[RMDB]
The record gives the reactivity of an RNA of 207 nucleotides to 2A3 and DMS. Conditions: 150 mM KOAc, 10 mM MgCl2 and 150 mM bicine (pH 8.5), 24 C. For DMS, 3,732 sequencing reads were counted. Source: RMDB library OK3TST, as collected in RNAgym.

RNA sequence: GGGAACGACUCGAGUAGAGUCGAAAAGCAAACGAUGGAACAAUUAAGGGUGUUAAACCCAGUAGGACUGAACCAAAGUAUUUAGAGUUUUAUGAUCCUAAAGGUGAAGAUAAAGUUGUUAAAAUCAAAGCGAGCAUUCUCACGGUAAGGAAAUGCGAGCAUAGUGAGCAUUCGUGCUCACUAUGCUAAAAGAAACAACAACAACAAC
Reactivity to 2A3 in 0.01 (KOAc 150mM, MgCl2 10mM, bicine 150mM(pH8.5), 24C), signal-to-noise 3, nucleotides 027 to 156: g020c010a050a110a020c030g030a020u060g000g040a040a040c030a040a010u050u130a080a070g030g040g010u020g050u170u190a130a100a030c000c030c010a000g020u030a020g000g060a040c040u060g030a020a000c000c010a110a030a070g040u030a110u070u230u120a080g020a000g050u070u030u030u050a130u100g070a110u030c010c000u060a090a070a060g070g020u060g060a030a020g030a070u140a110a120a100g010u010u040g000u010u050a090a120a030a060u090c050a030a000a040g070c040g040a030g000c020a020u040u030c030u040c090a130c060g020g060u090a040a040g030g020a020a010a010u040g020c010g020
Reactivity to DMS in 0.01 (KOAc 150mM, MgCl2 10mM, bicine 150mM(pH8.5), 24C), signal-to-noise 2, nucleotides 027 to 156: g000c060a060a110a060c060g000a110u000g040g000a050a130c020a040a070u000u000a060a150g000g020g040u010g010u000u000a060a120a080c040c000c050a160g000u010a110g020g000a140c050u000g000a080a150c050c040a040a100a140g020u000a080u020u010u010a120g020a100g000u000u020u000u000a110u010g000a090u000c010c020u000a000a090a100g020g010u000g000a090a060g020a070u010a050a100a160g010u010u010g000u000u000a050a030a110a110u020c040a040a070a120g000c060g010a120g010c040a060u000u000c000u000c020a050c060g000g000u030a110a100g000g010a020a040a070u000g000c010g040